[RMDB]
RNA sequence: GGGAACGACUCGAGUAGAGUCGAAAAUAGUCAAAGCCCAGUGGCUGGUAGCCUGUGACGGUGGAGCAAGUUUUGUCCGUCGCACUCUGAAUGUGCCGUUUGAAGGUAAAACUGCGCCAAAUCAGUACUACUAGUCCCCAUUCGUGGGGACUAGUAGAAAAGAAACAACAACAACAAC
Reactivity to 2A3 in 0.01 (KOAc 150mM, MgCl2 10mM, bicine 150mM(pH8.5), 24C), signal-to-noise 2, nucleotides 027 to 126: u130a010g070u000c020a080a010a060g040c010c010c020a030g010u040g100g010c020u010g130g080u080a010g010c000c000u050g050u030g030a050c050g030g050u070g030g020a090g060c030a110a130g080u060u040u070u080g000u030c000c010g030u040c040g100c020a020c020u040c090u070g150a290a140u120g000u030g050c040c020g010u050u110u170g080a140a060g010g000u020a010a010a020a020c000u010g000c030g020c010c050a020a070a040u090c020a030g040u050a070
Reactivity to DMS in 0.01 (KOAc 150mM, MgCl2 10mM, bicine 150mM(pH8.5), 24C), signal-to-noise 3, nucleotides 027 to 126: u000a110g000u010c050a100a090a120g000c010c000c010a150g030u000g020g010c010u000g000g010u010a110g020c170c010u000g010u000g000a070c120g020g050u010g010g000a060g000c030a030a100g000u000u000u000u000g020u000c000c010g000u000c130g000c010a010c020u000c300u000g010a090a120u010g010u000g000c010c180g020u010u000u010g000a090a070g020g000u000a010a010a010a040c010u000g020c030g020c000c030a050a100a060u000c060a060g010u010a180